Chemical mapping of a 177-nucleotide RNA with 2A3. Source: RMDB library OK1LIB, as collected in RNAgym.

[RMDB]
RNA sequence: GGGAACGACUCGAGUAGAGUCGAAAAUCAAAUGAAAGAAGUACCUCAAAAUAUGUUAAGUCAACUUGCAGAUGGUGGCUGGCCUCAACCAAUCGUUGAUGCAUAUGGCGAAAAGGGUGGUACACCACGUGUCCCCCGGUUUCGACCGGGGGACACGAAAAGAAACAACAACAACAAC
Reactivity to 2A3 in 0.01 (KOAc 150mM, MgCl2 10mM, bicine 150mM(pH8.5), 24C), signal-to-noise 1, nucleotides 027 to 126: u080c000a010a060a110u210g040a000a060a300g040a240a030g100u150a060c040c040u190c060a000a000a000a290u080a040u000g000u130u300a160a070g040u040c000a000a000c040u170u000g070c030a080g000a300u210g130g000u000g110g020c000u080g120g130c000c000u000c000a060a040c040c040a020a000u230c020g000u000u000g030a060u120g050c000a000u080a000u100g000g150c090g000a010a010a010a010g120g000g000u120g000g000u100a100c100a000c000c130a000